[RMDB]
RNA sequence: GGGAACGACUCGAGUAGAGUCGAAAAAUCGCUGUUUUUGUGGCUGGCUUUCAGCGGGCUGGAGGAGCCGGGAGCGGAGGCGGAGGACCGAGCCAAAAACGUCAGCCGAGGCCGGGCGGCCCCGCUCAAAAUCUUCGUAUCUUCGGAUACGAAGAAAGAGUGUAAGUAAGUUCGCUUACUUACACUCAAAAGAAACAACAACAACAAC
Reactivity to 2A3 in 0.01 (KOAc 150mM, MgCl2 10mM, bicine 150mM(pH8.5), 24C), signal-to-noise 3, nucleotides 027 to 156: a000u100c040g000c030u030g020u040u070u030u050u060g090u070g040g000c030u020g000g020c010u030u090u110c040a040g020c070g050g010g000c040u050g020g040a040g030g030a010g030c040c050g050g060g000a010g010c030g010g030a120g010g020c040g040g040a070g030g030a020c020c020g020a040g000c010c010a050a080a030a010a020c040g050u070c040a010g000c030c010g010a020g000g010c010c020g010g020g040c010g040g010c000c000c000c000g000c000u030c020a060a110a020a050u010c000u000u000c000g000u000a000u010c000u010u020c070g010g000a000u000a000c000g000a000a000g010a000a000a000
Reactivity to DMS in 0.01 (KOAc 150mM, MgCl2 10mM, bicine 150mM(pH8.5), 24C), signal-to-noise 1, nucleotides 027 to 156: a060u000c040g040c010u000g020u000u000u000u000u000g020u020g050g000c010u000g020g020c050u000u000u010c020a080g020c050g020g020g000c030u000g020g010a090g010g000a130g010c010c000g000g040g000a070g040c040g010g000a140g000g010c050g040g010a180g020g020a100c040c010g020a150g000c010c040a030a100a050a040a060c030g010u000c190a050g000c020c020g040a250g010g000c020c010g020g000g000c020g000g000c030c090c000c000g030c000u020c010a000a020a060a140u000c010u010u000c040g020u010a020u010c020u000u010c300g080g010a030u000a010c010g010a000a000g010a040a040a040